[RMDB]
RNA sequence: GGGAACGACUCGAGUAGAGUCGAAAAUGCGUGAUUUGGGGAGACUAUAUAGGGAUGUUACCUUUUGUGAGAUAUUAUGUCUACAGCUUCUCACAGCACCAUUAAACUAGUAGGAUAAAUUCUGUCUGCAGGAGACAGAAGCCACUCACUACUGUUGCAUGCGCAGUAGAUUCGUCUACUGCGCAUGAAAAGAAACAACAACAACAAC
Reactivity to DMS in 0.01 (KOAc 150mM, MgCl2 10mM, bicine 150mM(pH8.5), 24C), signal-to-noise 1, nucleotides 027 to 156: u010g060c090g040u010g000a070u060u010u020g000g060g020g030a130g010a170c090u000a100u000a050u000a100g030g030g010a110u020g020u000u010a030c010c000u010u000u010u000g030u010g010a040g050a060u000a110u010u010a120u000g010u020c020u000a060c010a090g030c080u000u000c020u000c010a060c000a130g020c050a000c080c020a070u010u000a060a140a160c040u000a010g030u010a080g000g000a090u010a100a070a190u010u000c010u000g040u000c000u000g030c160a300g010g000a080g030a030c000a000g000a050a000g030c080c050a060c160u010c040a060c020u000a010c040u000g040u020u010g040
Reactivity to 2A3 in 0.01 (KOAc 150mM, MgCl2 10mM, bicine 150mM(pH8.5), 24C), signal-to-noise 2, nucleotides 027 to 156: u080g000c070g000u030g000a100u040u020u030g020g000g020g010a020g010a070c120u070a080u040a060u100a130g120g040g020a070u100g080u060u100a080c020c000u130u080u100u060g070u080g070a070g040a030u080a080u170u180a100u300g060u000c000u060a040c070a020g000c040u040u040c020u000c010a010c010a020g010c000a020c030c000a020u150u100a010a030a060c060u030a030g010u010a010g020g040a040u040a130a130a020u070u000c000u030g020u000c010u040g030c050a070g020g140a000g000a010c000a000g020a000a000g010c000c020a040c000u010c000a140c010u080a010c000u000g010u000u040g050